The data come from the RNA Mapping Database (RMDB), library M2RFPK. The record gives the reactivity of an RNA of 207 nucleotides to 2A3. The 2A3 profile rests on 5,460 reads.
RNA sequence: GGGAACGACUCGAGUAGAGUCGAAAAGUGUAGCGUCACUUUGAUGGCGGUACUGUGAAUUGAUGCAAGGUGUGGAGCGACCUUAAACAGUUCUGGUGGUGCUCUGAAUGGAGUGCUCUACUGAGAUUUAACUUAUGCACGUUCGCGUGCAUAAGAAGUUCACUCACUUGUUCGCAAGUGAGUGAACAAAAGAAACAACAACAACAAC
Reactivity to 2A3 in 0.01 (KOAc 150mM, MgCl2 10mM, bicine 150mM(pH8.5), 24C), signal-to-noise 7, nucleotides 027 to 156: g110u070g010u040a050g110c030g040u040c000a030c030u160u150u220g210a270u050g040g000c020g050g100u030a020c040u060g010u050g080a070a130u080u090g030a060u080g070c050a060a020g000g000u030g020u080g040g000a010g000c010g010a020c000c000u050u110a100a080a020c020a030g000u020u020c010u030g020g010u020g020g000u020g000c010u000c010u070g150a110a080u230g030g010a000g000u030g020c010u020c020u030a070c040u090g080a030g040a210u060u120u140a100a010c000u000u000a000u000g000c000a000c010g020u030u030c080g030c000g080u000g000c000a000u000a000a000g000a000a000